[RMDB]
RNA sequence: GGGAACGACUCGAGUAGAGUCGAAAAUUUGAGUGAUGGGGGGACGCAGUAGGCUAGGGUAAGCGCGCUGUUGGAUAUGCGCGUCCAAGCAGUUAGGCCGAUGAGUAGGCAAAUCCACUCAUCACACCCGUCCGUCAUUAUUCGUAAUGACGGACGGAAAAGAAACAACAACAACAAC
Reactivity to DMS in 0.01 (KOAc 150mM, MgCl2 10mM, bicine 150mM(pH8.5), 24C), signal-to-noise 2, nucleotides 027 to 126: u000u020u020g000a160g010u030g000a030u020g010g000g010g000g000g010a020c080g000c130a140g040u000a110g020g000c010u000a110g000g000g000u020a210a270g010c000g020c050g010c000u000g010u030u000g000g010a240u000a080u000g000c050g010c000g000u010c000c020a060a100g020c050a070g000u000u000a120g010g020c000c040g000a180u010g010a100g030u030a110g000g030c040a050a080a190u010c000c000a010c010u000c000a000u000c010a010c030a090c140
Reactivity to 2A3 in 0.01 (KOAc 150mM, MgCl2 10mM, bicine 150mM(pH8.5), 24C), signal-to-noise 1, nucleotides 027 to 126: u040u020u160g070a090g050u080g020a040u070g050g000g000g000g000g030a000c000g030c000a030g020u080a080g100g010c000u070a010g000g020g090u140a100a000g000c000g020c000g000c050u030g060u300u110g130g010a060u080a050u300g000c040g000c000g000u000c000c020a060a040g090c000a040g060u130u230a110g030g140c000c030g010a030u060g030a030g140u200a060g010g000c030a000a000a040u020c000c000a000c050u050c000a000u000c020a000c030a010c000
An RNA of 177 nucleotides, treated with DMS and 2A3 and read out base by base. The data come from the RNA Mapping Database (RMDB), library OK2TRN. For DMS the reverse transcriptase was MarathonRT.